[RMDB]
RNA sequence: GGGAACGACUCGAGUAGAGUCGAAAAUUAAACGCAACGACUCGAGUAGAGUCGAAAACAAAACGACUCGAGUAGAGUCGAAAACCCAACCACUCGAGUAGAGUCGAAGCGAACGCAAGCGAAAAAAACGAUGAUAGGAGUUCGCUCCUAUCAUCGUAAAAGAAACAACAACAACAAC
Reactivity to 2A3 in 0.01 (KOAc 150mM, MgCl2 10mM, bicine 150mM(pH8.5), 24C), signal-to-noise 1, nucleotides 027 to 126: u110u000a000a300a000c300g010c300a010a010c000g010a000c000u040c000g030a010g120u030a010g030a000g000u000c000g030a010a010a010a010c210a200a200a000a000c000g010a000c000u000c010g000a000g000u020a000g010a010g000u000c000g000a000a000a020a000c190c180c170a010a000c000c200a010c000u030c020g050a070g110u120a040g060a010g020u010c020g020a030a010g080c030g030a060a020c050g010c110a080a030g010c030g210a080a020a000a000a000a000